[RMDB]
RNA sequence: GGGAACGACUCGAGUAGAGUCGAAAAGAUAUGGAAACCAUUCAGUCGCGCGGUCUCGGAAACGAGACCGAACUACGAACUACGAUGCACGUGGUUUCCUAAGUCAAAAGUGUGGUUCGCCACACAAGAUUACACUUUAGUUCGCUAAAGUGUAAUCAAAAGAAACAACAACAACAAC
Reactivity to DMS in 0.01 (KOAc 150mM, MgCl2 10mM, bicine 150mM(pH8.5), 24C), signal-to-noise 9, nucleotides 027 to 126: g000a030u000a280u010g000g000a010a010a010c000c000a030u000u000c200a220g010u010c070g010c150g010c000g000g000u000c000u000c000g000g000a070a060a130c000g010a010g010a000c000c000g010a010a030c110u010a170c130g000a070a080c150u010a160c090g000a070u010g020c160a130c300g010u000g000g000u000u000u000c000c000u000a030a110g010u010c030a060a070a060a130g010u000g010u000g000g000u000u010c230g010c000c000a010c000a000c010a060a070
Reactivity to 2A3 in 0.01 (KOAc 150mM, MgCl2 10mM, bicine 150mM(pH8.5), 24C), signal-to-noise 7, nucleotides 027 to 126: g010a000u020a010u080g000g000a000a000a000c020c010a000u110u120c140a110g160u120c070g030c020g000c010g140g000u000c000u000c000g010g020a040a030a010c000g000a000g000a000c010c000g000a010a010c010u090a050c070g180a190a030c050u190a090c180g190a150u260g060c080a010c090g020u010g000g000u010u000u000c000c000u010a030a010g020u000c020a010a020a110a170g010u010g000u010g010g060u070u110c300g050c070c000a000c000a000c000a000a010
Source: RMDB library TTRDEL, as collected in RNAgym. The record gives the reactivity of an RNA of 177 nucleotides to DMS and 2A3. For 2A3 the reverse transcriptase was SuperScript II with manganese.